Chemical mapping of a 207-nucleotide RNA with DMS and 2A3. Source: RMDB library M2RFPK, as collected in RNAgym. For 2A3 the reverse transcriptase was SuperScript II with manganese. The reactions ran in a buffer of 150 mM KOAc, 10 mM MgCl2 and 150 mM bicine (pH 8.5), at 24 C.

[RMDB]
RNA sequence: GGGAACGACUCGAGUAGAGUCGAAAAGAAACAGGAUCGACAAGGGUGUAAAGAUCGCUCUUUUACUCGGCAUGAUACUACCGUUAUCGGGUCAACAGAGUAGUUGCAAAUGACAACAAUGCUCAGGAAGGGGUAGCACCGUUCGCGGUGCUACCAACUGUUAGGACAAGUUCGCUUGUCCUAACAGAAAAGAAACAACAACAACAAC
Reactivity to DMS in 0.01 (KOAc 150mM, MgCl2 10mM, bicine 150mM(pH8.5), 24C), signal-to-noise 3, nucleotides 027 to 156: g000a080a110a130c060a140g020g000a070u010c000g010a110c050a070a120g000g040g020u000g020u000a060a100a110g000a120u010c050g000c040u000c030u030u000u000u000a060c060u010c020g000g020c020a070u010g010a180u000a060c020u000a100c010c010g030u010u000a090u000c050g010g000g020u000c030a050a080c070a070g000a030g030u010a050g020u010u000g020c010a050a100a130u010g010a120c040a050a040c020a050a070u000g000c020u000c020a080g010g000a110a140g020g010g010g030u000a010g000c010a020c000c010g010u000u010c280g020c030g010g010u010g020c000u000a000c000c000a000a010
Reactivity to 2A3 in 0.01 (KOAc 150mM, MgCl2 10mM, bicine 150mM(pH8.5), 24C), signal-to-noise 7, nucleotides 027 to 156: g030a010a080a010c050a040g060g030a080u060c040g040a020c050a080a060g070g060g020u050g050u130a120a140a020g080a070u090c040g010c040u020c010u050u080u040u040a050c020u010c020g030g000c030a030u100g020a040u080a120c020u020a040c030c030g060u080u060a060u100c040g010g000g030u030c020a030a050c020a050g020a020g020u050a020g020u010u010g010c030a030a120a210u210g050a110c000a000a010c000a020a150u100g010c010u030c040a010g050g070a040a050g050g070g000g000u000a000g000c000a000c010c000g010u040u050c160g000c020g080g000u000g000c000u000a000c000c000a000a000